Notes
An RNA of 177 nucleotides, treated with DMS and read out base by base.
RNA sequence: GGGAACGACUCGAGUAGAGUCGAAAAGAUCGUUGCAAUGCUGUCAUUUCACAACCACAAAAAAUAAUCCACCCUUGAGUUAGUGGCUCAGGUGGAUUAUUCGUCCAAUCGGCCGAUCCCUUGCAGGAAGGUCUAAGCUGUUCGCAGCUUAGACCUUAAAAGAAACAACAACAACAAC
Reactivity to DMS in 0.01 (KOAc 150mM, MgCl2 10mM, bicine 150mM(pH8.5), 24C), signal-to-noise 1, nucleotides 027 to 126: g030a090u000c080g050u010u030g020c110a060a070u000g000c030u010g010u030c070a110u000u040u010c040a060c090a130a160c060c050a050c140a000a020a070a120a100a010u000a000a000u000c000c000a020c000c020c180u010u000g000a000g010u000u000a150g000u050g000g000c000u000c000a020g020g050u000g000g000a000u000u000a000u000u000c120g020u000c040c050a050a080u010c080g000g000c010c010g000a120u000c000c030c010u010u030g000c120a130g000g000

The reactions ran in a buffer of 150 mM KOAc, 10 mM MgCl2 and 150 mM bicine (pH 8.5), at 24 C. It was measured as part of the RMDB libraries RFM100 and RFMREP. Reactivities are given for positions 27 through 126.